[RMDB]
RNA sequence: GGGAACGACUCGAGUAGAGUCGAAAAGUGUUGUCCUUCGGGACAACACAAAAAAACCUUUGUGAUCAUACGCACGACGAUCGUCGACAGCCCAUUGGGCUGGUGACGGGAGUGCGUGAUCACUCUGGUAAAAAAACUUAACCUUCGGGUUAAGUAACACAGACAGUAGAUUCGUCUACUGUCUGUGAAAAGAAACAACAACAACAAC
Reactivity to 2A3 in 0.01 (KOAc 150mM, MgCl2 10mM, bicine 150mM(pH8.5), 24C), signal-to-noise 2, nucleotides 027 to 156: g010u010g010u000u010g000u000c010c000u040u060c290g020g000g000a000c000a020a000c000a000c000a070a000a000a000a020a040a060c010c000u000u000u000g000u000g010a010u000c020a060u110a300c020g020c000a000c000g280a110c020g010a090u020c010g010u000c000g040a040c000a000g000c000c000c110a300u190u300g000g000g010c000u000g000g000u030g000a000c010g000g000g000a010g000u000g010c000g000u000g000a000u000c010a000c000u000c000u000g000g000u040a160a060a000a000a000a000a010c000u010u000a000a000c000c000u010u060c300g020g010g000u000u000a010a000g010u000a010a000
Reactivity to DMS in 0.01 (KOAc 150mM, MgCl2 10mM, bicine 150mM(pH8.5), 24C), signal-to-noise 1, nucleotides 027 to 156: g030u000g000u000u000g010u000c000c010u010u000c300g040g010g040a000c000a000a000c010a000c000a000a010a020a110a070a060a030c000c000u000u000u040g010u000g010a010u010c010a100u000a080c020g030c010a010c000g020a170c200g000a080u000c000g020u000c000g010a010c000a020g000c000c000c010a300u000u040g080g030g000c010u010g000g000u000g000a050c020g020g000g020a080g010u000g020c010g010u000g000a010u010c000a000c000u000c050u000g000g060u010a000a000a090a160a130a070a050c000u000u010a010a010c000c000u000u010c300g050g020g010u000u000a000a000g040u010a070a140